[RMDB]
About this RNA: Chemical mapping of a 177-nucleotide RNA with 2A3 and DMS.
RNA sequence: GGGAACGACUCGAGUAGAGUCGAAAAAGGUCCACCAGGCCGUCGGGCGUGGCAGGCAGAUACUGAGUCAACAGCUCCGAGCGCACUAUAACCGCGGCAUACUGUGCCCGACUGACCGCGACGUUGAGACCAUCCCUUCAUUCGUGAAGGGAUGGUCAAAAGAAACAACAACAACAAC
Reactivity to 2A3 in 0.01 (KOAc 150mM, MgCl2 10mM, bicine 150mM(pH8.5), 24C), signal-to-noise 1, nucleotides 027 to 126: a010g060g020u010c000c010a020c040c010a050g090g000c010c010g010u050c010g050g010g000c020g050u040g070g020c040a020g090g000c000a030g050a090u160a230c030u080g000a000g100u140c070a070a040c010a150g020c020u020c010c030g020a050g000c050g070c010a070c170u160a060u140a300a010c030c000g020c050g000g000c010a000u050a080c010u020g020u080g060c020c030c130g030a030c040u060g080a080c000c080g000c070g090a010c120g070u060u080g100a090
Reactivity to DMS in 0.01 (KOAc 150mM, MgCl2 10mM, bicine 150mM(pH8.5), 24C), signal-to-noise 1, nucleotides 027 to 126: a050g000g000u030c050c000a110c080c080a180g000g080c040c080g020u000c090g050g000g010c010g030u030g040g120c030a020g000g000c010a150g010a150u010a120c080u000g010a020g020u000c100a150a100c160a110g000c040u000c000c080g000a130g020c060g000c050a110c120u020a100u000a140a140c180c050g030c030g010g000c020a160u000a080c080u000g000u000g010c030c000c020g010a050c050u000g000a130c050c050g010c100g030a120c030g000u000u000g030a300
For DMS the reverse transcriptase was MarathonRT. Conditions: 150 mM KOAc, 10 mM MgCl2 and 150 mM bicine (pH 8.5), 24 C. Source: RMDB library OK2TRN, as collected in RNAgym.